RNA sequence: GGGAACGACUCGAGUAGAGUCGAAAAGAAGAGAAGCGCGCGAAUUGGAAACCAGCGAACCCUAUUACGCGCGCAAGGAACCGGGCCUUGGUUCCUUGGAAAGAUUAGAUAAUCUCGCUGGUAAAGAAAUAUCGUACCGUUUCGACGGUACGAUAUUAAAAGAAACAACAACAACAAC
Reactivity to 2A3 in 0.01 (KOAc 150mM, MgCl2 10mM, bicine 150mM(pH8.5), 24C), signal-to-noise 3, nucleotides 027 to 126: g090a050a000g070a030g020a110a020g050c020g000c000g000c010g000a030a020u080u070g050g010a140a180a020c000c000a010g000c010g000a090a060c010c000c000u020a040u050u120a080c000g000c000g000c010g020c000a000a000g000g000a000a000c000c000g100g180g040c040c050u060u120g010g000u010u000c010c020u010u000g010g030a100a090a010g020a040u060u190a030g090a180u190a190a070u030c030u020c070g000c000u000g000g020u020a000a010a010g030a000
Reactivity to DMS in 0.01 (KOAc 150mM, MgCl2 10mM, bicine 150mM(pH8.5), 24C), signal-to-noise 2, nucleotides 027 to 126: g000a150a130g000a200g000a190a090g000c030g000c020g000c000g010a060a110u040u030g010g000a140a140a110c000c010a010g000c020g000a030a140c060c000c040u010a120u020u010a110c010g000c000g000c000g000c000a000a000g020g010a020a000c010c000g060g000g010c230c130u090u030g000g000u000u000c000c000u000u000g000g000a070a060a090g010a130u020u020a050g010a080u030a080a020u020c010u010c010g000c010u020g000g000u030a050a110a050g010a040